[RMDB]
RNA sequence: GGGAACGACUCGAGUAGAGUCGAAAAGAUAUGGAGCCACAAGGUUCGAAGAACGGUAAUUAUUGAUUCUCUUCGGAAACGAAGAGAGAUCAAUAAUUACCGGGAGAACUGAUGUGGCUCCUAAGUCCAUACCCCCCCAGUUCGCUGGGGGGGUAUGAAAAGAAACAACAACAACAAC
Reactivity to DMS in 0.01 (KOAc 150mM, MgCl2 10mM, bicine 150mM(pH8.5), 24C), signal-to-noise 1, nucleotides 027 to 126: g000a150u010a300u010g000g000a030g000c000c000a000c010a100a300g000g000u010u010c000g030a170a190g010a100a290c020g020g010u000a000a030u000u000a010u000u010g010a010u000u000c000u010c000u000u000c010g010g000a160a110a220c000g010a010a000g000a020g000a020g000a010u000c010a010a010u010a000a000u000u010a000c000c000g000g010g000a080g000a000a000c000u010g020a300u000g030u000g000g000c000u000c000c010u000a000a060g020u000c030